[RMDB]
Structure probing data (DMS and 2A3) for a 177-nucleotide construct. Conditions: 150 mM KOAc, 10 mM MgCl2 and 150 mM bicine (pH 8.5), 24 C. The 2A3 profile rests on 11,895 reads. It was measured as part of the RMDB library OK2TRN.
RNA sequence: GGGAACGACUCGAGUAGAGUCGAAAAGAGGUUACGGAGUUAGGAGACUAACUGGACAACCAAGCACUCUCCAGUUAGUCAUUUAGAGAGUUCAGUCUCUAAAUCUGGAGUGCAGAGACAGAGGCGGGCAGUGGUCACUAUUCGUAGUGAUCACUGCAAAAGAAACAACAACAACAAC
Reactivity to DMS in 0.01 (KOAc 150mM, MgCl2 10mM, bicine 150mM(pH8.5), 24C), signal-to-noise 9, nucleotides 027 to 126: g000a080g010g000u000u010a090c110g010g000a060g010u000u010a090g010g010a150g010a050c000u000a010a020c000u000g010g000a070c150a060a130c060c050a080a000g000c070a070c040u000c080u000c010c000a010g000u000u000a030g000u000c050a030u000u000u000a020g000a030g010a050g010u000u010c240a140g010u000c000u000c000u000a010a020a080u000c060u010g010g010a050g010u000g010c030a080g000a100g010a000c100a070g010a060g000g000c060g010g000
Reactivity to 2A3 in 0.01 (KOAc 150mM, MgCl2 10mM, bicine 150mM(pH8.5), 24C), signal-to-noise 4, nucleotides 027 to 126: g030a020g020g000u060u030a040c060g010g020a030g010u040u050a030g040g050a050g000a010c000u010a000a000c000u010g000g020a010c030a040a020c050c030a020a000g010c000a010c020u040c000u000c010c000a000g000u010u020a010g010u010c000a010u010u020u020a020g000a000g010a000g030u140u220c070a050g100u030c000u000c000u010a010a030a020u000c030u030g030g010a040g010u030g000c010a000g010a000g000a000c030a000g030a010g020g050c000g000g040